[RMDB]
RNA sequence: GGGAACGACUCGAGUAGAGUCGAAAAUCGCGCAAGCGCCUUGAGCGCCUGAAGGAGGGACUGCAGGAGCGGCUGGAAGCGCUCUCGACCCGAAAAGACGAUCUGCUCACCAUCGCCGAGAUCGGCGGCCCUGCGUGGUAUUCGUACCACGCAGGGCAAAAGAAACAACAACAACAAC
Reactivity to 2A3 in 0.01 (KOAc 150mM, MgCl2 10mM, bicine 150mM(pH8.5), 24C), signal-to-noise 2, nucleotides 027 to 126: u090c020g000c030g040c040a130a020g000c040g000c030c010u080u160g040a090g000c020g020c000c010u160g080a090a020g020g050a060g020g030g050a060c030u070g020c140a030g050g000a010g030c040g080g000c000u080g060g050a070a000g020c050g000c000u000c000u000c000g060a080c000c000c000g010a100a040a000a060g080a050c070g090a030u020c050u080g060c020u030c000a080c000c000a160u040c040g020c010c020g130a150g030a300u290c040g020g000c000g000

An RNA of 177 nucleotides, treated with 2A3 and read out base by base. Reactivities are given for positions 27 through 126. Source: RMDB library OK1LIB, as collected in RNAgym. Conditions: 150 mM KOAc, 10 mM MgCl2 and 150 mM bicine (pH 8.5), 24 C.